[RMDB]
Conditions: 150 mM KOAc, 10 mM MgCl2 and 150 mM bicine (pH 8.5), 24 C.
This 207-nucleotide RNA was probed chemically with 2A3 and DMS.
For DMS the reverse transcriptase was MarathonRT.
It was measured as part of the RMDB library RNAMAK.
RNA sequence: GGGAACGACUCGAGUAGAGUCGAAAAAGAGUGUUCGCACUCUGACUUGCGUACUACCGUAGUGCCAGAUCCAGGGACUAUCUUAUCCCAAAUAGGAUAAGCCGAGGUCCUGGAUCGGUAAUACUACGGUAUCGCUACAGUGGACGUUCGCGUCCAACACGAAAGUUGUGUUCGCACAACUUUCGUGAAAAGAAACAACAACAACAAC
Reactivity to 2A3 in 0.01 (KOAc 150mM, MgCl2 10mM, bicine 150mM(pH8.5), 24C), signal-to-noise 2, nucleotides 027 to 156: a020g020a010g010u060g000u120u140c260g050c090a000c000u000c010u010g050a110c060u070u090g000c020g050u050a110c070u010a000c010c030g020u000a000g010u010g060c120c100a230g070a000u000c000c010a010g150g000g000a030c000u000a020u090c000u010u010a000u030c020c010c010a240a230a180u300a140g000g000a000u010a000a000g090c020c160g150a140g000g040u000c000c000u010g010g020a000u000c000g020g000u020a070a030u080a050c000u010a000c010g000g000u000a010u010c010g000c000u010a030c040a120g070u080g060g000a000c000g000u000u150c170g070c050g090u050c050c000a020a010
Reactivity to DMS in 0.01 (KOAc 150mM, MgCl2 10mM, bicine 150mM(pH8.5), 24C), signal-to-noise 1, nucleotides 027 to 156: a070g000a000g030u000g010u020u020c250g040c020a030c020u030c000u000g000a110c070u000u000g000c020g050u010a110c220u010a020c000c010g050u000a000g050u000g030c040c000a160g000a000u010c000c000a010g010g000g020a000c010u000a100u010c000u010u010a020u000c000c000c030a040a160a270u000a050g020g000a030u000a030a020g050c240c150g000a090g010g000u000c000c000u010g010g020a010u000c010g000g020u000a040a080u000a150c010u020a010c000g010g020u000a000u010c020g040c050u010a060c050a130g010u000g010g010a010c050g010u000u000c180g060c030g020u000c000c000a020a160